[RMDB]
RNA sequence: GGGAACGACUCGAGUAGAGUCGAAAAUGGAGCCUGAUGCGCACGGCAUUCAAAGAUAAUGAUUUACAGGUCUACGGUUUGCGUGUCGUCGAGCCACACCACGACGGAACGCCGCACUGGCAUAUGAUGCUUUUUUGUAAUCCACGCCAGCGUAACCGGUACGCGUUCCGUUCGCGGAACGCGUACCAAAAGAAACAACAACAACAAC
Reactivity to 2A3 in 0.01 (KOAc 150mM, MgCl2 10mM, bicine 150mM(pH8.5), 24C), signal-to-noise 1, nucleotides 027 to 156: u090g050g000a010g080c040c060u070g000a020u010g010c090g030c030a000c090g040g000c060a000u060u050c000a010a070a000g010a040u050a110a070u080g260a160u130u050u090a050c060a000g150g000u000c060u030a030c070g080g070u020u020u000g010c060g030u000g000u000c000g050u010c000g020a070g000c020c000a020c000a000c000c000a020c010g030a000c000g030g000a010a000c000g030c000c000g090c000a040c000u020g000g000c000a080u100a020u300g000a020u000g000c000u090u180u110u160u300u090g170u150a110a020u000c020c000a000c000g000c000c000a020g000c030g010u000a070a240c070c090